RNA sequence: GGGAACGACUCGAGUAGAGUCGAAAAUAAACAAGGGGAAAUUGCGAAGUUACUAAAUUUGCCUGAUAACGCACACACGCAGCAAUGGCGUAAGACGUAAUGCGAAAUCAAGCAGUUAGCGGGCUGUCAUCCUGAUCCUAUUCGUAGGAUCAGGAUGAAAAGAAACAACAACAACAAC
Reactivity to DMS in 0.01 (KOAc 150mM, MgCl2 10mM, bicine 150mM(pH8.5), 24C), signal-to-noise 3, nucleotides 027 to 126: u050a060a130a090c070a070a080g050g030g000g000a070a040a040u050u000g000c020g010a140a050g020u010u000a100c070u020a050a040a110u010u000u000g000c010c070u000g000a030u030a010a300c010g000c000a010c190a090c180a000c030g010c000a240g010c030a170a120u030g010g010c000g040u000a000a010g030a080c000g060u010a100a120u020g000c000g000a040a130a010u000c010a000a050g000c000a030g000u000u020a000g010c060g000g000g030c030u000g000u000
Reactivity to 2A3 in 0.01 (KOAc 150mM, MgCl2 10mM, bicine 150mM(pH8.5), 24C), signal-to-noise 7, nucleotides 027 to 126: u150a000a070a020c070a080a060g010g020g010g030a030a060a110u080u080g040c040g060a110a010g050u070u060a060c020u070a010a070a200u150u130u080g000c000c000u000g000a000u010a050a010c010g000c010a000c010a010c000a000c040g000c010a010g000c010a040a300u260g260g000c010g000u000a000a020g050a000c000g000u020a030a060u030g000c000g000a040a020a050u020c010a010a000g010c000a020g010u030u030a010g010c080g010g050g000c020u030g050u020